[RMDB]
RNA sequence: GGGAACGACUCGAGUAGAGUCGAAAAGUAAUAGAUAACUGGAUGCAGCGUAGGCGUCAACGCAUAUCCAGUACGAAUGGUACCUGUAAAUAAAAUAUGGCGCCUAGUACAAGUACCAACAGAAGGAUAAACGAUGGUGAUGUCAAUCACAUUUGUAGAUUUAGGAUAGUUUCGACUAUCCUAAAUCAAAAGAAACAACAACAACAAC
Reactivity to DMS in 0.01 (KOAc 150mM, MgCl2 10mM, bicine 150mM(pH8.5), 24C), signal-to-noise 3, nucleotides 027 to 156: g040u020a070a100u010a080g030a130u010a080a080c030u000g020g000a040u000g010c090a050g020c030g070u000a070g020g040c000g010u010c000a060a050c000g020c000a120u000a100u000c020c000a040g000u000a060c070g010a130a130u000g000g010u000a000c000c000u030g020u000a030a090a120u010a130a040a120a180u020a160u000g010g030c010g030c010c010u000a060g020u000a090c010a020a020g010u000a030c020c010a060a160c100a100g010a170a080g020g000a190u000a060a100a120c060g010a080u010g000g030u000g000a040u000g010u000c100a090a100u010c020a050c060a110u000u000u000g030u020a130
Reactivity to 2A3 in 0.01 (KOAc 150mM, MgCl2 10mM, bicine 150mM(pH8.5), 24C), signal-to-noise 6, nucleotides 027 to 156: g040u060a020a120u070a130g100a110u150a140a090c010u020g010g000a010u070g100c180a100g000c240g010u020a010g000g000c000g000u000c010a010a000c000g000c010a020u010a010u160c000c010a000g000u010a000c010g050a110a140u070g010g010u010a010c010c000u030g010u030a010a120a130u130a030a090a110a020u180a070u020g000g000c000g000c000c010u010a010g000u000a010c010a020a010g000u010a010c010c020a020a010c030a040g160a100a050g100g030a060u130a130a140a020c060g040a050u120g070g070u030g020a020u030g060u200c080a060a030u040c010a020c030a060u040u050u150g080u070a030

The record gives the reactivity of an RNA of 207 nucleotides to DMS and 2A3.
For 2A3 the reverse transcriptase was SuperScript II with manganese.
For 2A3, 5,101 sequencing reads were counted.
The DMS profile rests on 4,482 reads.